[RMDB]
RNA sequence: GGGAACGACUCGAGUAGAGUCGAAAACUAUUCCACUGACUUUACUAAAAUCCAAUCCGACUCAUCCUUACUCCAAAAUCGUCAACAAAACCAUCGAAUUGAGACUGAUCAGCUUUCUCAUUUCCCUGAUCAUUUAGAUCCAAGUCGUAUUCCUUCACUACUAGCAAAAUUUCGAUUUUGCUAGUAGAAAAGAAACAACAACAACAAC
Reactivity to DMS in 0.01 (KOAc 150mM, MgCl2 10mM, bicine 150mM(pH8.5), 24C), signal-to-noise 3, nucleotides 027 to 156: c050u010a170u000u000c000c010a150c130u030g030a070c050u000u010u000a130c040u010a080a070a060a050u010c000c030a080a140u010c040c020g020a080c050u000c040a130u010c030c030u000u000a060c030u010c000c010a050a040a100a050u010c040g020u000c020a050a150c090a080a060a080a080c030c050a000u000c050g030a070a060u000u000g010a090g000a070c070u000g010a130u000c160a120g030c030u010u000u000c040u000c040a110u010u010u000c010c010c000u000g000a020u000c010a100u000u000u000a080g010a050u000c000c010a030a240g020u000c000g040u000a140u000u010c000c010u000u000c050a280
Reactivity to 2A3 in 0.01 (KOAc 150mM, MgCl2 10mM, bicine 150mM(pH8.5), 24C), signal-to-noise 9, nucleotides 027 to 156: c030u050a080u070u050c020c020a050c090u060g040a020c010u080u080u120a030c030u060a030a050a060a090u080c030c030a050a050u020c040c040g050a040c040u040c060a160u030c040c000u020u030a030c010u000c010c010a000a030a030a090u080c080g120u110c050a060a060c030a060a140a040a070c080c040a080u160c070g020a040a030u040u040g000a010g000a010c020u030g060a170u140c050a040g190c020u020u060u010c020u010c010a020u010u030u030c010c000c000u000g000a000u010c000a020u030u060u020a020g000a020u000c010c000a010a000g020u010c010g020u040a100u030u050c010c000u020u030c020a030
Overview: This 207-nucleotide RNA was probed chemically with DMS and 2A3. 2A3 adducts were read by reverse transcription with SuperScript II with manganese. Conditions: 150 mM KOAc, 10 mM MgCl2 and 150 mM bicine (pH 8.5), 24 C.